[RMDB]
RNA sequence: GGGAACGACUCGAGUAGAGUCGAAAACCAGAUGACGGUCCUGCCAUGAGACCGCAACGAGAGCAUGUCGCAUCGAAUGGACGCGGGGAGUCGGCAGCUUGCCCCACGGAUGAGCGCCUAAUGCCGGAAGAGACGUGCAACUUCGGUUGCACGUCAAGAUGACAAUAAUCUUCGGAUUAUUGUCAUCAAAAGAAACAACAACAACAAC
Reactivity to DMS in 0.01 (KOAc 150mM, MgCl2 10mM, bicine 150mM(pH8.5), 24C), signal-to-noise 3, nucleotides 027 to 156: c000c020a200g000a130u000g010a060c010g000g020u000c020c030u000g000c070c190a090u000g000a140g000a030c030c020g010c010a040a060c030g000a130g000a150g020c050a100u010g010u000c010g040c010a100u000c040g010a160a300u000g010g000a090c010g020c030g000g020g030g010a110g000u010c030g000g000c040a150g000c040u000u010g030c000c010c000c020a110c050g010g010a100u010g030a080g020c040g060c030c030u000a090a060u000g030c000c020g000g010a150a090g020a210g000a000c000g030u000g000c000a020a020c030u000u000c260g040g010u000u000g000c010a010c000g000u000c000a010a030
Reactivity to 2A3 in 0.01 (KOAc 150mM, MgCl2 10mM, bicine 150mM(pH8.5), 24C), signal-to-noise 6, nucleotides 027 to 156: c000c000a020g070a140u130g040a060c010g000g010u030c020c020u070g150c050c040a120u120g050a040g000a100c010c010g000c020a030a050c050g080a010g000a010g080c040a070u110g040u100c030g000c050a090u070c040g050a050a060u100g020g050a020c050g000c050g020g000g010g000a030g060u090c040g030g000c020a010g010c020u050u110g080c000c000c010c010a030c040g020g020a090u100g030a030g020c030g040c000c030u080a100a030u090g040c030c020g020g010a080a020g070a020g000a040c000g000u000g000c000a000a000c010u030u040c140g120g000u000u000g000c000a000c000g000u000c000a000a000